[RMDB]
RNA sequence: GGGAACGACUCGAGUAGAGUCGAAAAGCUGGGUUGGUCUCGGUGCAGCAGUCGGAAGCACGCCACGGCGUCCACGACCUCGGUGCUCUCCAAGGGGCUGUCCUCCGCAAACAGGCCCGUGGUGGUGCAGGUCUUCCAAAUUCGUUUGGAAGACCUGAAAAGAAACAACAACAACAAC
Reactivity to DMS in 0.01 (KOAc 150mM, MgCl2 10mM, bicine 150mM(pH8.5), 24C), signal-to-noise 2, nucleotides 027 to 126: g010c050u020g030g020g030u000u000g010g000u010c030u000c090g000g010u000g030c100a070g040c060a060g030u000c050g010g000a100a130g000c020a030c030g000c030c040a010c060g030g010c120g020u000c020c030a150c080g000a040c030c030u000c080g000g020u010g000c040u000c060u000c040c100a130a100g030g030g010g000c040u000g010u000c020c040u020c050c070g030c140a080a080a080c110a070g000g010c050c000c020g010u000g000g010u000g000g030u010g000